An RNA of 177 nucleotides, treated with DMS and 2A3 and read out base by base. For 2A3, 1,352 sequencing reads were counted. Conditions: 150 mM KOAc, 10 mM MgCl2 and 150 mM bicine (pH 8.5), 24 C. For DMS, 783 sequencing reads were counted. 2A3 is a SHAPE reagent: it acylates the 2'-hydroxyl of flexible nucleotides of all four kinds. The data come from the RNA Mapping Database (RMDB), library RFMREP.
RNA sequence: GGGAACGACUCGAGUAGAGUCGAAAACAGAAUAUUUUUAAGCUUUGUUAUGCCACAGUUUACAUGUUACAAUUAAACAUUCUUCACGUGAGAAUUGUUUACAAAUUGUCUCUAAACACAUGUGAAUACUAAUGACGAUGUUCGCAUCGUCAUUAGUAAAAGAAACAACAACAACAAC
Reactivity to DMS in 0.01 (KOAc 150mM, MgCl2 10mM, bicine 150mM(pH8.5), 24C), signal-to-noise 1, nucleotides 027 to 126: c030a080g000a140a070u010a010u000u000u050u000u000a050a120g000c090u000u010u000g000u000u000a180u000g000c060c060a050c150a120g000u020u000u020a020c020a000u000g000u000u000a020c000a000a010u010u000a010a000a010c000a000u000u000c000u000u020c020a090c300g020u000g000a000g000a020a020u010u000g000u010u010u010a120c190a300a100a020u000u000g000u000c160u010c130u010a040a000a060c090a030c000a010u000g000u000g010a020a050u000
Reactivity to 2A3 in 0.01 (KOAc 150mM, MgCl2 10mM, bicine 150mM(pH8.5), 24C), signal-to-noise 2, nucleotides 027 to 126: c030a000g180a180a040u090a250u110u240u040u040u150a160a000g000c060u060u110u060g030u130u050a080u140g020c010c010a070c020a070g000u040u010u020a010c020a010u030g000u000u030a010c000a000a020u030u020a010a000a010c010a000u000u010c010u030u010c070a130c300g130u200g040a000g030a020a030u180u120g020u030u000u020a060c080a010a100a010u000u010g000u000c030u020c020u180a040a040a000c030a000c010a050u050g010u020g030a050a010u060